An RNA of 177 nucleotides, treated with 2A3 and DMS and read out base by base. For DMS, 7,158 sequencing reads were counted. For 2A3, 740 sequencing reads were counted.
RNA sequence: GGGAACGACUCGAGUAGAGUCGAAAAGGGUGUUGUGUGCGGAGCUGUGGCGUCGCGUGUGAGGCGCGUGCAGGGUGAGUGUGAGUGGACGCGUGAGUGUGUGAGUGUGCGCGCUUGGAGCGUGUUAAAACAAGAAGACCUUCGGGUCUUCUUGUUUAAAAGAAACAACAACAACAAC
Reactivity to 2A3 in 0.01 (KOAc 150mM, MgCl2 10mM, bicine 150mM(pH8.5), 24C), signal-to-noise 2, nucleotides 027 to 126: g120g010g000u090g000u120u120g000u040g030u010g060c000g000g110a050g010c020u070g010u040g090g050c000g030u010c000g000c000g000u200g000u080g110a040g010g000c020g000c000g060u010g010c000a080g060g010g070u180g020a040g050u100g010u050g040a020g080u070g130g000a000c040g020c040g090u060g000a110g020u090g020u080g020u000g030a110g040u030g020u090g030c010g000c000g000c010u010u180g130g020a020g010c000g000u030g010u120u090a040
Reactivity to DMS in 0.01 (KOAc 150mM, MgCl2 10mM, bicine 150mM(pH8.5), 24C), signal-to-noise 1, nucleotides 027 to 126: g000g000g010u010g020u000u020g010u010g010u010g020c070g010g000a110g010c050u010g030u000g020g030c080g010u010c020g000c080g050u000g020u000g000a110g020g010c020g030c040g030u020g010c040a060g000g000g000u010g000a080g020u010g000u020g010a030g020u010g020g040a060c040g020c070g000u000g000a040g010u020g010u000g030u020g010a120g000u030g010u000g000c010g010c030g000c030u000u020g000g010a130g010c030g030u000g020u010u010a030
DMS adducts were read by reverse transcription with MarathonRT. The reactions ran in a buffer of 150 mM KOAc, 10 mM MgCl2 and 150 mM bicine (pH 8.5), at 24 C. 2A3 adducts were read by reverse transcription with SuperScript II with manganese.